[RMDB]
Record summary:
Structure probing data (2A3 and DMS) for a 177-nucleotide construct. For DMS, 918 sequencing reads were counted. In probing experiments dimethyl sulfate is read out at A N1 and C N3, which are open when not base-paired. It was measured as part of the RMDB library OK2TRN. Conditions: 150 mM KOAc, 10 mM MgCl2 and 150 mM bicine (pH 8.5), 24 C.
RNA sequence: GGGAACGACUCGAGUAGAGUCGAAAAGUGUGAUCAGCGCCAGCAGGCCCGAGAUCGACACCAUCAUGGCCAGCACCGCCACCAUGGUCAGAAUCGACGUCACCAGCUGGCUGAUCGUCAUUGACAGGUGACCACUGUGUUUCGACACAGUGGUCACAAAAGAAACAACAACAACAAC
Reactivity to 2A3 in 0.01 (KOAc 150mM, MgCl2 10mM, bicine 150mM(pH8.5), 24C), signal-to-noise 1, nucleotides 027 to 126: g050u010g000u030g020a020u010c000a000g020c040g110c180c010a020g000c020a060g000g090c070c110c080g050a010g000a120u030c010g020a000c000a030c060c000a010u030c030a020u020g020g010c060c020a070g200c050a140c000c100g010c000c030a000c000c010a000u000g020g020u030c020a030g100a090a040u050c000g040a020c010g110u080c030a000c040c000a020g000c010u010g000g000c010u020g000a000u020c020g060u040c010a000u000u160g140a080c080a040g190
Reactivity to DMS in 0.01 (KOAc 150mM, MgCl2 10mM, bicine 150mM(pH8.5), 24C), signal-to-noise 2, nucleotides 027 to 126: g040u020g050u000g010a030u000c020a090g030c170g010c150c010a070g000c030a090g000g000c090c050c040g010a300g020a020u000c000g000a220c260a010c060c100a010u000c150a060u000g030g010c010c080a160g010c110a020c160c160g000c020c000a060c050c220a010u010g040g000u000c050a140g010a050a040u010c010g000a300c280g020u000c040a090c010c000a090g000c030u010g000g030c050u000g000a060u000c020g000u000c020a090u000u050g030a120c140a120g000